About this RNA:
This 177-nucleotide RNA was probed chemically with 2A3 and DMS. DMS (dimethyl sulfate) methylates the pairing face of unpaired adenines and cytosines. Values are in units of 0.01, from 0 to 300, in steps of 10. DMS adducts were read by reverse transcription with MarathonRT.

RNA sequence: GGGAACGACUCGAGUAGAGUCGAAAAACCUGCUCUGCUCGCUCAUUCAUGGCUUUCCUGUGCUCUGCCAUUGCUCAGGUGAGUGAGCAGUUCGCCCGGCACAUUGACCAGCAGAUCCAGGGCAGCCCACACGCCUGAAAUUCGUUUCAGGCGUGUGAAAAGAAACAACAACAACAAC
Reactivity to 2A3 in 0.01 (KOAc 150mM, MgCl2 10mM, bicine 150mM(pH8.5), 24C), signal-to-noise 1, nucleotides 027 to 126: a000c000c010u010g010c010u020c010u010g000c000u000c020g020c010u020c010a060u160u120c040a050u100g020g000c000u010u060u100c030c040u090g100u130g090c030u020c030u150g010c000c040a070u050u230g020c030u060c150a020g000g090u010g010a000g000u020g000a000g020c000a000g000u020u000c020g010c000c000c000g090g120c080a030c000a120u060u220g080a080c060c060a030g040c010a020g030a100u000c020c000a010g030g000g000c010a010g000c020c000
Reactivity to DMS in 0.01 (KOAc 150mM, MgCl2 10mM, bicine 150mM(pH8.5), 24C), signal-to-noise 2, nucleotides 027 to 126: a080c030c000u000g020c030u010c010u000g010c000u000c000g000c080u000c020a060u000u000c080a140u020g030g000c010u010u000u000c060c070u000g010u000g000c060u010c090u000g000c060c050a070u000u000g030c270u020c130a090g010g000u000g010a020g020u000g010a010g010c000a030g000u000u000c070g020c010c010c050g000g000c120a080c100a100u000u000g030a120c070c050a100g010c050a070g010a070u000c040c080a110g010g010g030c050a090g020c090c050